RNA sequence: GGGAACGACUCGAGUAGAGUCGAAAACGCUAUCGCCGCUAUAUACGCGCGGCGUAUGCGCGCGCGGCGUAUCGCGCGGCGUAUAUAUAUCGCUAUCGCUAUUAUAUAGCGCGCUAUUAUGCGCGCGCCCGAUUAGCAGAUUCGUCUGCUAAUCGGGAAAAGAAACAACAACAACAAC
Reactivity to DMS in 0.01 (KOAc 150mM, MgCl2 10mM, bicine 150mM(pH8.5), 24C), signal-to-noise 2, nucleotides 027 to 126: c060g010c130u010a070u010c050g000c010c000g000c010u000a110u010a070u000a060c170g000c060g010c110g000g000c030g040u010a040u000g020c020g010c020g000c030g010c020g010g000c100g000u010a000u010c090g040c100g020c020g010g020c000g000u000a040u000a030u000a060u000a070u020c120g000c030u010a110u020c100g030c030u000a040u020u010a030u000a110u000a070g000c000g000c050g020c010u000a080u010u000a080u000g000c020g010c010g030c030g000
Reactivity to 2A3 in 0.01 (KOAc 150mM, MgCl2 10mM, bicine 150mM(pH8.5), 24C), signal-to-noise 3, nucleotides 027 to 126: c020g030c050u070a040u130c000g000c000c010g000c050u030a000u010a010u020a240c070g080c030g000c040g130g000c000g020u000a040u080g100c080g010c030g020c000g000c000g080g090c040g050u080a020u090c000g010c010g020c010g040g000c010g080u010a010u000a010u010a000u000a010u090c040g000c070u070a040u270c050g000c140u040a090u300u020a090u160a040u080a090g020c010g010c010g030c030u060a120u280u090a060u300g020c020g000c000g030c010g000